The data come from the RNA Mapping Database (RMDB), library OK2TRN. This 177-nucleotide RNA was probed chemically with DMS. The DMS profile rests on 1,044 reads. For DMS the reverse transcriptase was MarathonRT. The RNA was probed in 150 mM KOAc, 10 mM MgCl2 and 150 mM bicine (pH 8.5) at 24 C. High DMS reactivity at an A or C suggests that its Watson-Crick edge is free.
RNA sequence: GGGAACGACUCGAGUAGAGUCGAAAACAACCUCACUUCUCCCGGAGACGUGCACCUGACCUGUGUGAACGGGUACUUCGGAGAGCGUCACUGCGACAUGGCGUCUCGUUACGGCGCAAAGGUGGAGCCCAACCAAACCGUUCGCGGUUUGGUUGGGAAAAGAAACAACAACAACAAC
Reactivity to DMS in 0.01 (KOAc 150mM, MgCl2 10mM, bicine 150mM(pH8.5), 24C), signal-to-noise 1, nucleotides 027 to 126: c130a060a100c060c010u000c060a090c040u010u000c040u010c010c000c050g010g010a050g000a060c050g050u000g000c030a080c020c030u000g020a070c170c150u020g010u000g020u010g000a110a040c000g010g000g050u000a030c090u010u000c020g020g000a080g000a030g020c090g010u010c000a080c120u000g010c070g030a060c130a120u010g000g020c040g010u020c060u010c020g010u000u000a130c160g010g000c000g000c000a020a020a120g010g000u000g010g000a080g010